[RMDB]
RNA sequence: GGGAACGACUCGAGUAGAGUCGAAAAGUCAGCAUGUGCAGUUAUACCCACUUUACAGGUGAUAACUCAGAGAGAUUUCAUGAGGUGGUGAAAGUUGAAGGGGCAUUAUCAGUGAUGGCUCCUGAACUAUACAGAACUUGUUCGCAAGUUCUGUAUAAAAAGAAACAACAACAACAAC
Reactivity to 2A3 in 0.01 (KOAc 150mM, MgCl2 10mM, bicine 150mM(pH8.5), 24C), signal-to-noise 2, nucleotides 027 to 126: g050u010c010a000g030c060a050u040g010u050g140c050a000g010u030u040a050u060a070c000c030c010a040c050u130u120u110a080c070a030g000g060u030g090a060u030a120a050c010u020c060a010g030a000g020a000g030a240u100u110u010c040a040u100g040a030g030g040u020g010g050u050g050a110a070a000g050u100u050g050a050a010g000g010g010g000c010a010u010u090a040u220c040a020g080u030g110a020u070g110g030c010u000c000c020u000g000a020a000c000
Reactivity to DMS in 0.01 (KOAc 150mM, MgCl2 10mM, bicine 150mM(pH8.5), 24C), signal-to-noise 7, nucleotides 027 to 126: g020u000c040a060g020c040a050u010g010u010g000c080a060g010u000u000a040u000a110c040c010c040a140c170u000u000u010a100c190a110g010g010u000g010a060u010a040a060c030u000c040a100g010a120g010a110g000a100u010u010u000c060a050u000g000a070g020g020u010g010g020u000g000a050a060a080g010u010u010g010a120a060g010g000g000g010c020a030u000u000a060u010c090a090g020u000g010a040u010g010g010c030u000c010c010u000g000a060a070c150